RNA sequence: GGGAACGACUCGAGUAGAGUCGAAAAGGCGCUUCUGCAUAGUGAUGUGGAUGUAGAUUUGAGGGGGAGGAGAGUGAGGAUAAUAUCGUAUGACUACUAUGAGAGGAGGGAGGUGGAGUGGGAGGACUCCCUAAUUGAGUUUCGACUCAAUUAGGGAAAAAGAAACAACAACAACAAC
Reactivity to DMS in 0.01 (KOAc 150mM, MgCl2 10mM, bicine 150mM(pH8.5), 24C), signal-to-noise 6, nucleotides 027 to 126: g000g010c050g010c040u000u000c020u010g000c030a020u010a120g010u040g020a120u020g000u010g000g000a020u020g000u030a070g000a090u010u030u020g020a100g030g000g000g010g010a110g010g020a110g000a090g010u030g000a100g010g000a080u030a050a070u020a250u010c090g000u020a070u030g000a090c100u020a060c070u010a050u010g000a140g010a170g000g010a160g000g010g010a090g000g000u040g020g010a060g000u020g010g000g000a100g000g010a110c150
Reactivity to 2A3 in 0.01 (KOAc 150mM, MgCl2 10mM, bicine 150mM(pH8.5), 24C), signal-to-noise 8, nucleotides 027 to 126: g060g010c040g000c050u030u000c000u030g030c020a020u060a050g210u210g180a120u060g030u050g060g000a020u040g050u090a090g030a210u050u040u140g090a060g000g030g020g000g000a050g000g020a040g000a000g030u070g030a030g030g020a030u040a120a040u080a110u070c060g040u100a020u170g070a060c030u100a020c010u020a100u140g070a070g010a040g130g010a060g020g010g010a120g010g020u150g030g040a090g010u240g030g000g000a050g000g030a020c010

Chemical mapping of a 177-nucleotide RNA with DMS and 2A3. DMS adducts were read by reverse transcription with MarathonRT. The DMS profile rests on 14,761 reads. It was measured as part of the RMDB library OK1LIB. The reactions ran in a buffer of 150 mM KOAc, 10 mM MgCl2 and 150 mM bicine (pH 8.5), at 24 C.